[RMDB]
RNA sequence: GGGAACGACUCGAGUAGAGUCGAAAACGGGGUUGGCUAUAGUUGAUUUCGAACCGUAUGCUUAUGUAUAUGGAAUGAUUUGUACGCUUUACGCAUGUGUACACUCACUCUCAGUUCACUCUUGUGAGAGAAGGGAGAGAGAGAUAUUUUGCGAUUAGGAUUCUGUUUUCUUCGGAAGGUGGAAUUCAAAAGAAACAACAACAACAAC
Reactivity to DMS in 0.01 (KOAc 150mM, MgCl2 10mM, bicine 150mM(pH8.5), 24C), signal-to-noise 2, nucleotides 027 to 156: c060g030g020g060g000u000u010g030g050c060u010a090u010a120g010u000u000g020a130u000u000u010c020g030a050a180c010c010g070u000a010u000g010c020u000u000a140u010g050u000a030u000a040u000g010g010a120a130u000g010a080u010u000u010g030u000a030c040g000c030u010u000u010a130c100g000c040a070u000g000u020g030u000a020c030a130c050u000c010a170c020u000c000u000c020a090g020u010u000c020a090c030u000c020u000u000g030u010g010a060g000a040g030a050a090g010g010g010a050g000a060g020a070g000a030g010a110u000a030u000u000u000u020g020c010g010a190u000u000a190
Reactivity to 2A3 in 0.01 (KOAc 150mM, MgCl2 10mM, bicine 150mM(pH8.5), 24C), signal-to-noise 2, nucleotides 027 to 156: c000g000g000g000g000u050u090g030g000c060u070a020u050a120g040u000u060g060a200u030u060u040c030g010a040a030c000c010g000u020a020u010g000c030u150u090a040u170g020u010a010u000a010u020g000g030a090a090u080g030a050u080u020u070g000u000a000c010g000c000u020u110u090a030c020g000c000a030u020g020u010g010u040a000c020a010c010u000c000a000c000u000c000u000c030a130g050u030u020c040a030c020u000c030u180u220g060u190g060a030g000a010g020a040a040g050g060g000a010g000a000g000a000g000a000g000a020u000a060u060u200u110u090g010c050g040a050u020u080a020
This 207-nucleotide RNA was probed chemically with DMS and 2A3. The data come from the RNA Mapping Database (RMDB), library OK3TST. Conditions: 150 mM KOAc, 10 mM MgCl2 and 150 mM bicine (pH 8.5), 24 C. 2A3 adducts were read by reverse transcription with SuperScript II with manganese. Values cover nucleotides 27 to 156.